An RNA of 177 nucleotides, treated with 2A3 and DMS and read out base by base.
The 2A3 profile rests on 2,153 reads.
Values cover nucleotides 27 to 126.
For 2A3 the reverse transcriptase was SuperScript II with manganese.
The reactions ran in a buffer of 150 mM KOAc, 10 mM MgCl2 and 150 mM bicine (pH 8.5), at 24 C.
The data come from the RNA Mapping Database (RMDB), library M2PK90.
RNA sequence: GGGAACGACUCGAGUAGAGUCGAAAAAUAAAUGCUGACGUCAACGUGGUCACCGAGGCCAGAAACAGGCCAACAACCCUGACCGGCUGCAAGAAAGGGAAGAAUUUUUCUUUUGCAGGUACAAAAACUACUAAGUUGUGUUCGCACAACUUAGUAGAAAAGAAACAACAACAACAAC
Reactivity to 2A3 in 0.01 (KOAc 150mM, MgCl2 10mM, bicine 150mM(pH8.5), 24C), signal-to-noise 2, nucleotides 027 to 126: a010u130a010a070a060u120g020c030u040g030a040c050g050u030c010a070a070c100g070u130g020g000u020c010a030c130c040g010a080g010g020c010c000a020g150a020a160a050c130a060g030g000c000c010a030a010c020a000a010c000c000c000u010g030a010c010c000g020g060c010u020g000c010a000a040g080a140a050a010g040g000g010a050a030g080a100a090u150u100u020u000u010c030u030u100u010u030g000c020a010g040g030u070a060c040a020a060a010a060a080
Reactivity to DMS in 0.01 (KOAc 150mM, MgCl2 10mM, bicine 150mM(pH8.5), 24C), signal-to-noise 2, nucleotides 027 to 126: a070u010a010a100a100u000g000c030u000g010a050c100g000u020c070a070a110c120g000u000g020g000u000c040a130c090c070g000a160g000g040c000c010a050g010a120a070a080c220a070g020g000c030c000a070a070c090a080a120c010c000c000u010g010a080c070c020g000g010c000u000g010c030a010a040g010a040a030a030g000g000g000a020a060g020a050a040u000u000u010u010u010c000u000u000u000u000g000c000a020g010g010u030a050c080a050a060a080a040a110